Structure probing data (2A3) for a 177-nucleotide construct. The reactions ran in a buffer of 150 mM KOAc, 10 mM MgCl2 and 150 mM bicine (pH 8.5), at 24 C. Values cover nucleotides 27 to 126. For 2A3 the reverse transcriptase was SuperScript II with manganese.
[RMDB]
RNA sequence: GGGAACGACUCGAGUAGAGUCGAAAAACUGGACUAUGGUACGCCAUAGUCCAGAGUUGCUCUCAAGACUUAUUUUUGAAAAGGAGAGACAGAAAAUGGAGCGACGCAGUCUACGGACUGCGUCGCACCAGUCUGAAUCUUUCGAGAUUCAGACUGGAAAAGAAACAACAACAACAAC
Reactivity to 2A3 in 0.01 (KOAc 150mM, MgCl2 10mM, bicine 150mM(pH8.5), 24C), signal-to-noise 1, nucleotides 027 to 126: a030c000u010g010g000a010c000u000a000u030g000g000u050a040c290g030c010c000a000u000a010g020u000c010c000a010g000a000g000u040u070g000c000u000c020u010c020a050a000g060a130c070u110u050a100u300u130u060u150u150g260a180a090a000a000g110g000a010g010a000g010a020c000a030g230a030a070a090a090u270g060g030a180g000c010g000a030c000g000c070a000g000u000c040u080a150c300g000g000a020c010u000g000c000g000u000c000g000c000a000